[RMDB]
RNA sequence: GGGAACGACUCGAGUAGAGUCGAAAAUAUGGAGGAUACACAGCUGUGGUGAGCGCAUUCACUAAGAAUUCCCGUAUUGUAUACAACACCAUGCCUUUGUCUGCAGCUACUCCCCCAUAUCCAAUGGAGGCGGAAGCCAUUUCAAUGGAGCACCGGACACUUAGCGUAGAUUCGUCUACGCUAAGUGAAAAGAAACAACAACAACAAC
Reactivity to DMS in 0.01 (KOAc 150mM, MgCl2 10mM, bicine 150mM(pH8.5), 24C), signal-to-noise 2, nucleotides 027 to 156: u000a020u000g030g020a110g000g010a100u020a130c160a090c100a040g040c000u000g010u000g020g070u010g020a110g020c100g080c080a080u000u000c020a080c070u000a070a220g020a100a110u000u000c040c020c030g040u000a130u000u030g010u000a200u010a100c060a110a090c080a000c020c000a090u010g010c030c030u000u000u000g010u020c030u010g000c000a030g000c020u010a100c160u010c040c010c000c000c000a050u000a070u000c020c050a020a120u010g010g000a090g060g010c060g050g000a160a160g000c000c020a040u010u000u010c100a090a070u010g000g000a190g060c150a120c010c000g000g020a300
Reactivity to 2A3 in 0.01 (KOAc 150mM, MgCl2 10mM, bicine 150mM(pH8.5), 24C), signal-to-noise 4, nucleotides 027 to 156: u030a000u020g020g010a000g010g000a010u060a230c100a030c050a090g010c020u000g010u050g030g030u030g030a020g000c140g010c050a040u140u150c040a040c140u110a070a040g060a120a170u100u090c010c070c070g050u060a110u070u160g060u020a090u040a080c070a120a010c010a060c100c040a040u040g010c010c000u030u130u210g120u140c010u000g000c030a000g000c020u040a050c040u000c020c000c000c000c010a000u000a010u000c020c010a050a030u050g050g000a030g010g010c000g010g050a080a030g030c010c020a050u020u110u070c020a030a030u060g020g010a010g030c010a040c030c010g020g050a000

Structure probing data (DMS and 2A3) for a 207-nucleotide construct.
2A3 is a SHAPE reagent: it acylates the 2'-hydroxyl of flexible nucleotides of all four kinds.
The RNA was probed in 150 mM KOAc, 10 mM MgCl2 and 150 mM bicine (pH 8.5) at 24 C.
Source: RMDB library OK3TST, as collected in RNAgym.